[RMDB]
RNA sequence: GGGAACGACUCGAGUAGAGUCGAAAAAACUUUUUGAAGCAGCUUAACUUUGCCCACUUGCUCGCCUCGACCGACGCCGCGCUCGCCGCGCUGGGCGACGUGGAUGCCUUUUUGCGGGCCACGGUGGCGGGCGGCGGGGUGGCACCGCCCGAGCUGCCGUGGAAAUAGCGUUCGCGCUAUUUCCACGAAAAGAAACAACAACAACAAC
Reactivity to 2A3 in 0.01 (KOAc 150mM, MgCl2 10mM, bicine 150mM(pH8.5), 24C), signal-to-noise 1, nucleotides 027 to 156: a000a010c140u190u060u010u060u120g080a110a010g000c020a010g000c010u020u050a090a060c020u230u270u280g020c030c010c010a050c020u080u120g030c050u070c080g000c000c000u070c050g150a180c010c000g060a080c070g050c070c110g000c020g000c070u000c000g040c010c010g120c020g100c140u090g090g000g000c000g010a000c000g040u040g000g040a080u090g010c010c020u060u110u090u250u300g090c160g000g020g020c010c020a020c010g000g030u030g070g010c050g000g000g020c010g010g000c010g020g010g000g010u030g040g120c020a030c000c020g050c000c030c050g030a000g010c010u040g020c000